[RMDB]
RNA sequence: GGGAACGACUCGAGUAGAGUCGAAAAGAUAUGGAAACGUGGGAGCAGACAAACUAUUCGGAAACGAACGAAUUUGAGAACUGCAUCGAUCACGUUUCCUAAGUCAAAAGAUGCCUUCGGGCAUCAAUCAUAGAUGGCUGUUCGCAGCCAUCUAUGAAAAAGAAACAACAACAACAAC
Reactivity to 2A3 in 0.01 (KOAc 150mM, MgCl2 10mM, bicine 150mM(pH8.5), 24C), signal-to-noise 2, nucleotides 027 to 126: g020a020u090a020u090g000g010a000a000a040c000g000u020g030g020g010a030g000c020a000g080a210c030a010a160a040c060u060a040u010u030c020g070g000a200a210a130c080g070a070a020c040g070a180a300u120u100u060g230a230g040a160a060c010u010g030c000a190u300c050g030a010u080c010a010c000g000u000u000u000c000c020u000a040a010g000u000c000a000a000a000a250g010a000u020g000c040c000u070u110c280g040g020g000c000a000u000c010a000a020
Reactivity to DMS in 0.01 (KOAc 150mM, MgCl2 10mM, bicine 150mM(pH8.5), 24C), signal-to-noise 3, nucleotides 027 to 126: g020a010u000a300u010g000g000a020a000a010c000g080u000g020g010g010a020g020c000a020g000a170c060a010a070a050c090u010a270u000u000c020g000g000a020a050a120c110g010a040a050c090g010a020a070u000u000u000g030a160g010a100a120c020u000g020c000a230u000c180g000a080u020c010a000c000g020u000u000u000c000c000u000a020a080g000u010c030a080a080a140a130g000a010u000g000c000c020u000u000c210g040g000g010c000a000u000c000a040a110

Source: RMDB library TTRDEL, as collected in RNAgym.
This 177-nucleotide RNA was probed chemically with 2A3 and DMS.
For DMS the reverse transcriptase was MarathonRT.
The RNA was probed in 150 mM KOAc, 10 mM MgCl2 and 150 mM bicine (pH 8.5) at 24 C.
The 2A3 profile rests on 2,472 reads.